Annotation: Conditions: 150 mM KOAc, 10 mM MgCl2 and 150 mM bicine (pH 8.5), 24 C. The record gives the reactivity of an RNA of 207 nucleotides to DMS and 2A3. For 2A3 the reverse transcriptase was SuperScript II with manganese. It was measured as part of the RMDB library ARCHII.
[RMDB]
RNA sequence: GGGAACGACUCGAGUAGAGUCGAAAACUAUCGCAAGACACCAGUUACUGAACAUGUCCUGUUGGAAAGAGAACAUGUUGAAGUAAUGAUGAACUGCAAACCGCCUCAGGCUGGAAACAGAGCAGGGUCAGUGGUCGCUGGUGUACGGUGCGAAGAUUCUAUUGAUUACGUUCGCGUAAUCAAUAGAAAAAGAAACAACAACAACAAC
Reactivity to DMS in 0.01 (KOAc 150mM, MgCl2 10mM, bicine 150mM(pH8.5), 24C), signal-to-noise 2, nucleotides 027 to 156: c050u000a050u000c020g040c040a070a120g000a150c000a020c010c000a130g000u010u000a070c010u000g000a040a010c000a040u000g010u010c020c010u010g070u000u000g030g020a130a160a190g010a030g030a000a010c000a040u000g000u000u000g000a140a070g020u000a000a060u010g000a060u000g000a080a100c020u020g000c050a060a080a130c060c020g020c030c010u010c100a130g030g020c040u000g000g010a130a110a130c070a100g000a160g010c060a120g000g040g040u000c060a120g030u010g000g000u000c050g010c040u000g000g000u000g000u000a020c050g000g020u000g000c000g010a070a100g010a120u000
Reactivity to 2A3 in 0.01 (KOAc 150mM, MgCl2 10mM, bicine 150mM(pH8.5), 24C), signal-to-noise 9, nucleotides 027 to 156: c020u050a080u160c000g000c010a020a020g010a010c000a000c000c000a010g000u020u020a010c010u040g050a030a010c010a030u010g010u000c010c010u060g080u160u090g100g090a060a080a020g060a010g010a030a010c000a010u020g010u030u040g110a120a020g040u090a100a040u080g050a020u050g040a060a050c010u010g000c010a040a060a080c020c030g040c020c020u170c090a080g040g000c020u080g030g020a090a080a040c050a040g070a010g040c010a010g020g020g020u040c010a020g020u030g080g020u020c020g000c010u000g000g000u020g020u050a120c030g110g030u030g000c000g000a010a010g030a030u030